[RMDB]
RNA sequence: GGGAACGACUCGAGUAGAGUCGAAAAUCUAUCACCAGCCCAUGUUUACGACACGAAUGGGCUGUUGCAAAUUACGUAUAGCUCUUGCAACAUCGUGUCGAAACGUUCCCAAGCUAUACGCGACAAAGUGGUAGUGUUUGUUCGCAAACACUACCACAAAAGAAACAACAACAACAAC
Reactivity to DMS in 0.01 (KOAc 150mM, MgCl2 10mM, bicine 150mM(pH8.5), 24C), signal-to-noise 1, nucleotides 027 to 126: u000c090u010a120u030c070a030c040c010a020g000c000c000c000a130u000g000u000u000u010a060c000g010a000c000a020c000g010a090a090u000g020g000g000c090u000g000u000u000g000c070a110a030a100u030u000a040c040g030u000a010u000a000g000c010u010c150u000u000g010c080a060a050c050a070u000c020g010u000g020u000c000g030a050a010a250c080g000u000u000c000c000c010a120a020g000c000u000a010u000a000c010g020c130g010a170c190a030a040a040
Reactivity to 2A3 in 0.01 (KOAc 150mM, MgCl2 10mM, bicine 150mM(pH8.5), 24C), signal-to-noise 1, nucleotides 027 to 126: u030c000u020a120u080c030a040c130c020a000g000c000c000c000a040u140g110u110u110u120a010c030g020a000c010a000c010g080a070a090u120g060g070g010c030u000g020u000u000g000c010a000a020a110u190u070a060c010g020u020a000u040a020g000c030u020c040u210u110g070c060a000a030c000a060u070c030g000u010g010u000c020g000a120a080a010c020g030u000u020c000c000c010a010a000g000c000u020a000u000a000c000g020c000g020a060c080a040a070a010